Description: The record gives the reactivity of an RNA of 207 nucleotides to DMS and 2A3.
[RMDB]
RNA sequence: GGGAACGACUCGAGUAGAGUCGAAAAGUGGCAUUCUACGCGAUCGGUUGCGUUGCUGGGGUAUCGAUCUGAAUGAUCAGACGAUAAAUCAGCGCCGCGCUCACGAAGGCUCCGUUACUAAUAACUUAGCAACGGUUGAUCUCUCAGCGGCAAGCGACUGUUAUGUAGUCUUCGGACUACAUAACAGAAAAGAAACAACAACAACAAC
Reactivity to DMS in 0.01 (KOAc 150mM, MgCl2 10mM, bicine 150mM(pH8.5), 24C), signal-to-noise 2, nucleotides 027 to 156: g040u010g020g040c050a090u000u000c020u000a020c030g000c000g020a070u000c020g000g020u000u000g020c030g020u000u020g010c000u000g020g000g000g020u000a040u000c020g000a130u020c010u000g010a080a150u010g000a220u000c000a010g000a040c000g010a020u000a000a060a070u000c030a060g020c040g010c020c000g030c010g020c050u010c040a120c170g010a050a080g010g000c030u000c030c000g030u000u010a010c010u000a010a060u010a060a200c300u000u000a000g010c000a000a020c000g000g020u000u010g000a100u000c040u000c010u000c000a300g020c020g010g030c010a070a110g020c020g000a110
Reactivity to 2A3 in 0.01 (KOAc 150mM, MgCl2 10mM, bicine 150mM(pH8.5), 24C), signal-to-noise 5, nucleotides 027 to 156: g120u120g030g000c040a060u110u000c020u070a030c030g020c020g080a060u080c050g040g050u080u120g020c020g010u020u060g010c010u010g000g000g010g010u000a000u010c010g120a280u000c020u010g080a130a150u300g120a300u120c000a000g000a000c000g000a000u000a020a030a010u000c010a010g000c000g000c020c000g000c000g020c020u090c030a080c080g040a050a000g020g000c010u020c010c000g000u000u010a010c010u000a010a150u140a210a080c140u040u030a010g000c010a000a000c000g040g000u120u040g150a280u000c010u000c010u010c030a010g010c000g010g000c100a110a010g020c020g040a040
In probing experiments dimethyl sulfate is read out at A N1 and C N3, which are open when not base-paired.